[RMDB]
RNA sequence: GGGAACGACUCGAGUAGAGUCGAAAAGUCGCACAGAUAGCAUGCCAAGCGCUGCUUGUAAAACAGCAACAAAAAUAACUGUAAACAACACAGAUUACGCUCCAGCUUACGCUAAAGCUGCGUGAGUUAAUCUCCUUUUGGAGCUGGACUGAUUAGAUCCCUAUAUCCCCUUCGGGGGAUAUAGGGAAAAAGAAACAACAACAACAAC
Reactivity to 2A3 in 0.01 (KOAc 150mM, MgCl2 10mM, bicine 150mM(pH8.5), 24C), signal-to-noise 1, nucleotides 027 to 156: g040u050c000g120c000a040c080a070g070a070u180a010g000c050a050u120g000c000c000a010a010g000c020g000c150u060g000c000u000u090g080u170a070a110a040a000c000a060g040c010a050a080c070a070a070a000a000a140u170a060a000c040u050g060u160a100a050a000c020a120a000c060a080c000a020g060a000u010u120a080c070g010c020u000c000c000a000g110c020u000u040a000c000g020c000u060a160a000a300g160c100u060g040c010g000u000g000a000g000u030u040a040a140u110c040u120c020c090u040u030u040u180g000g000a000g000c020u040g000g000a000c010u070g010a070u010u130a020g110a170
Reactivity to DMS in 0.01 (KOAc 150mM, MgCl2 10mM, bicine 150mM(pH8.5), 24C), signal-to-noise 1, nucleotides 027 to 156: g040u000c110g000c060a120c060a190g000a110u000a100g020c070a030u030g020c050c030a110a160g000c060g020c020u000g010c000u000u000g000u030a150a080a090a200c030a040g040c000a110a300c020a020a090a020a150a180u000a080a160c000u000g030u000a170a160a120c020a020a060c060a100c040a020g000a050u000u000a070c190g010c010u000c000c030a100g010c000u020u000a050c020g020c030u040a080a130a150g000c190u000g010c020g040u020g000a000g010u000u030a020a000u010c010u000c070c090u000u020u000u000g000g010a130g000c000u000g060g000a210c080u010g020a130u000u000a150g000a190
An RNA of 207 nucleotides, treated with 2A3 and DMS and read out base by base. The reactions ran in a buffer of 150 mM KOAc, 10 mM MgCl2 and 150 mM bicine (pH 8.5), at 24 C. Values are in units of 0.01, from 0 to 300, in steps of 10. Values cover nucleotides 27 to 156.